[RMDB]
RNA sequence: GGGAACGACUCGAGUAGAGUCGAAAAGCUGUUGAUACUUUGGAUACUUUUUUCCAAACAUCUUAUCAAACUCUAACUGAGGUACACCUGUAUCGGUUUGUGUUUUAUAUAGCAUUCCAGCGUACAGGGCAUCCUAGCGAUUCGUCGCUAGGAUGCCAAAAGAAACAACAACAACAAC
Reactivity to 2A3 in 0.01 (KOAc 150mM, MgCl2 10mM, bicine 150mM(pH8.5), 24C), signal-to-noise 1, nucleotides 027 to 126: g040c040u020g010u090u110g060a020u110a160c070u000u000u050g030g000a000u100a170c250u130u170u070u030u020u030c010c000a010a000a000c010a040u020c000u000u030a010u120c040a080a000a000c000u000c000u010a030a240c040u120g210a000g040g010u040a070c060a120c010c140u140g010u020a000u010c000g010g000u000u040u100g000u000g000u030u000u080u000a300u170a100u190a020g000c020a020u040u050c000c000a100g000c040g040u160a030c020a110g000

The record gives the reactivity of an RNA of 177 nucleotides to 2A3. For 2A3 the reverse transcriptase was SuperScript II with manganese. The RNA was probed in 150 mM KOAc, 10 mM MgCl2 and 150 mM bicine (pH 8.5) at 24 C.